[RMDB]
RNA sequence: GGGAACGACUCGAGUAGAGUCGAAAACAUACUGGUCAGACACGGCUGGAGGCCAAGGUCAAGUUGAAAGUUGCAGUCCAGCCAGCAUGAGAACUGCCAUGCGAGCGUAGAGACACAGGCAGCAGCAUUUACGAUAGUAUUUCGAUACUAUCGUAAAAAAAGAAACAACAACAACAAC
Reactivity to 2A3 in 0.01 (KOAc 150mM, MgCl2 10mM, bicine 150mM(pH8.5), 24C), signal-to-noise 9, nucleotides 027 to 126: c020a010u180a070c030u060g030g020u060c030a010g030a080c020a020c110g030g000c020u030g010g030a020g040g000c020c020a050a030g140g030u090c060a060a090g070u070u080g130a130a080a030g030u070u070g000c030a020g070u000c010c000a000g000c040c000a010g000c010a020u050g010a020g030a210a080c050u050g030c030c000a040u050g010c030g030a070g020c030g020u090a050g030a010g020a120c020a020c010a090g080g000c010a010g000c000a000g020c030a060
Reactivity to DMS in 0.01 (KOAc 150mM, MgCl2 10mM, bicine 150mM(pH8.5), 24C), signal-to-noise 9, nucleotides 027 to 126: c070a080u020a080c070u000g010g010u000c020a090g010a100c120a120c110g010g010c010u000g000g010a110g010g010c030c050a070a100g010g010u010c100a070a110g000u010u010g000a080a080a080g010u010u000g010c040a100g010u000c010c010a070g000c010c020a130g000c020a030u000g000a120g010a090a110c080u010g010c030c020a050u010g000c010g000a120g010c070g010u010a080g010a140g000a070c060a060c080a060g000g010c030a040g000c040a050g010c100a130
The record gives the reactivity of an RNA of 177 nucleotides to 2A3 and DMS. DMS adducts were read by reverse transcription with MarathonRT.